[RMDB]
RNA sequence: GGGAACGACUCGAGUAGAGUCGAAAAUAUUCGCAUCGCUCAAACGAUGACCUAAUGAAAUCGCAAAGUCGACACCAAGUGUGCUUUGAUUGAGUAUGUAGUAUUCGAUUAAUGAGCACAUAAUGCGCCUACGUGCGUCUACGCUAGCGCGCGAAGCCCUCGGGUGCGGUUUCGACCGCACCCGAGGAAAAGAAACAACAACAACAAC
Reactivity to 2A3 in 0.01 (KOAc 150mM, MgCl2 10mM, bicine 150mM(pH8.5), 24C), signal-to-noise 2, nucleotides 027 to 156: u160a040u070u200c020g000c000a020u000c070g000c030u170c230a200a090a060c040g000a000u020g070a040c010c010u090a220a170u250g010a010a100a080u110c030g000c120a230a170a000g010u140c030g030a000c010a030c080c030a080a080g040u030g000u000g000c000u050u030u090g020a010u000u000g000a000g020u010a030u180g140u080a060g030u010a030u070u010c000g000a000u020u110a230a060u240g070a000g040c000a000c040a050u110a020a140u100g000c010g030c010c010u030a030c020g060u080g050c100g100u120c170u190a000c010g030c190u050a030g000c000g000c020g000c000g110a030a030g010c000